[RMDB]
RNA sequence: GGGAACGACUCGAGUAGAGUCGAAAAACGCAUCAUACGUGAUGCGAGAACUACAGUUCCGCUCCUCUAGCACACAGAGCUCAAUUGGGUGCGACCCCCCCCUCUCCCGUGGGUCAACGGGAACCAAAAAAGACCCUUUAGUUCGCUAAAGGGUCAACAUCUCGGUAUGGUUCGCCAUACCGAGAUGAAAAGAAACAACAACAACAAC
Reactivity to 2A3 in 0.01 (KOAc 150mM, MgCl2 10mM, bicine 150mM(pH8.5), 24C), signal-to-noise 1, nucleotides 027 to 156: a000c000g020c020a020u000c010a010u020a120c300g120u040g000a020u020g000c020g000a050g040a020a040c110u230a070c000a050g000u000u000c020c060g000c060u020c000c000u060c060u070a000g060c020a000c020a000c020a030g030a030g030c000u040c120a150a200u140u180g080g020g000u010g000c040g050a040c000c000c000c000c000c000c000c000u020c000u000c020c000c000g030u000g000g050g010u130c040a000a010c010g000g000g020a000a000c000c000a000a040a060a060a000a040g010a000c000c000c000u010u000u010a010g020u020u040c140g010c170u000a000a010a000g000g000g010u000c000a010a000